[RMDB]
RNA sequence: GGGAACGACUCGAGUAGAGUCGAAAAACGCUUCACAAUGUGCGGCAAAGAAACAUUGUUUAUGCAAAGGCACUUUGCAAUGUGUGCUCAAACAUUGCUUAUUCAAACACGCUUCACAAUGUGCGACAAAACUUCACGGUCUUCGGACCGUGAAGAAGCGGGAUUAAUACUUCGGUAUUAAUCCCGCAAAAGAAACAACAACAACAAC
Reactivity to 2A3 in 0.01 (KOAc 150mM, MgCl2 10mM, bicine 150mM(pH8.5), 24C), signal-to-noise 2, nucleotides 027 to 156: a000c030g000c010u000u000c010a000c020a060a010u070g000u010g000c010g100g020c170a220a100a020g090a020a070a010c020a060u020u020g050u050u050u130a040u080g060c030a070a050a010g130g000c050a000c010u090u020u010g000c010a050a050u010g020u010g040u020g060c080u050c160a110a060a010c000a000u020u040g000c000u060u060a120u180u140c040a000a130a060c020a000c090g040c020u140u080c040a030c000a100a140u100g040u030g020c000g100a080c070a020a080a080a070c000u000u000c000a000c000g000g030u000c000u020u040c040g070g000a000c000c020g000u000g000a000a000g000a000a000